[RMDB]
RNA sequence: GGGAACGACUCGAGUAGAGUCGAAAAAUAGCACUUUUGACAGUGUCUCAAGGCAAAUGAGACUCACAAAGAAGAAGAGUUCACAUUUGAUACCAGCUAACACUCUCCUUCUUGGAGAGCUGAUGAAAGUGUAGGUACAGUUCGCUGUACCUACACUAAAAGAAACAACAACAACAAC
Reactivity to DMS in 0.01 (KOAc 150mM, MgCl2 10mM, bicine 150mM(pH8.5), 24C), signal-to-noise 2, nucleotides 027 to 126: a060u010a050g000c020a070c010u000u000u010u010g010a130c270a080g050u000g000u000c010u000c100a070a080g000g020c030a030a010a030u000g000a300g000a030c000u010c020a110c190a030a100a130g000a120a060g000a130a100g000a050g030u000u000c020a100c020a070u000u000u000g000a140u000a110c050c030a110g010c080u000a130a140c080a120c010u000c000u000c010c000u000u010c170u000u000g020g020a010g020a010g000c090u000g020a110u000g020a080a060
Reactivity to 2A3 in 0.01 (KOAc 150mM, MgCl2 10mM, bicine 150mM(pH8.5), 24C), signal-to-noise 3, nucleotides 027 to 126: a010u140a020g010c010a010c040u050u090u100u210g100a040c070a090g010u000g020u030c000u050c060a080a130g090g010c020a040a020a000u020g000a030g000a020c000u010c010a100c060a080a180a020g190a100a000g070a070a010g000a060g020u090u070c090a040c020a100u040u050u020g120a110u150a120c060c040a040g040c050u090a140a020c030a020c050u000c010u000c010c000u120u250c060u090u080g010g000a010g000a000g020c030u010g010a080u100g030a120a170
Structure probing data (DMS and 2A3) for a 177-nucleotide construct.
Source: RMDB library OK2TRN, as collected in RNAgym.
DMS adducts were read by reverse transcription with MarathonRT.
Values cover nucleotides 27 to 126.
The DMS profile rests on 1,269 reads.
The reactions ran in a buffer of 150 mM KOAc, 10 mM MgCl2 and 150 mM bicine (pH 8.5), at 24 C.